RNA sequence: GGGAACGACUCGAGUAGAGUCGAAAAGCCUCGCCUCAGCGCGGACACCGACAAGGGCCUGCUGAAGCGCACCAAUCAGAACUUGCACGACUUCUCUGUCAAGGGUCUGCGUACUCUGGUGCUGGCGCCGCGUGGCAAGGUUCGCCUUGCCACGCGGAAAAGAAACAACAACAACAAC
Reactivity to 2A3 in 0.01 (KOAc 150mM, MgCl2 10mM, bicine 150mM(pH8.5), 24C), signal-to-noise 1, nucleotides 027 to 126: g040c000c000u000c000g020c000c060u090c030a050g030c000g090c170g000g000a090c180a300c110c080g150a100c050a060a090g030g010g000c010c090u040g070c010u010g030a050a030g030c020g030c030a040c000c000a030a170u220c010a010g040a100a030c010u110u120g020c070a010c110g100a030c160u300u100c020u120c110u220g180u100c050a070a140g030g080g000u030c020u020g000c010g010u070a020c010u060c020u010g010g000u080g050c070u050g050g000c020g010
Record summary:
Chemical mapping of a 177-nucleotide RNA with 2A3. Reactivities are given for positions 27 through 126. Conditions: 150 mM KOAc, 10 mM MgCl2 and 150 mM bicine (pH 8.5), 24 C. For 2A3, 509 sequencing reads were counted. It was measured as part of the RMDB library OK2TRN.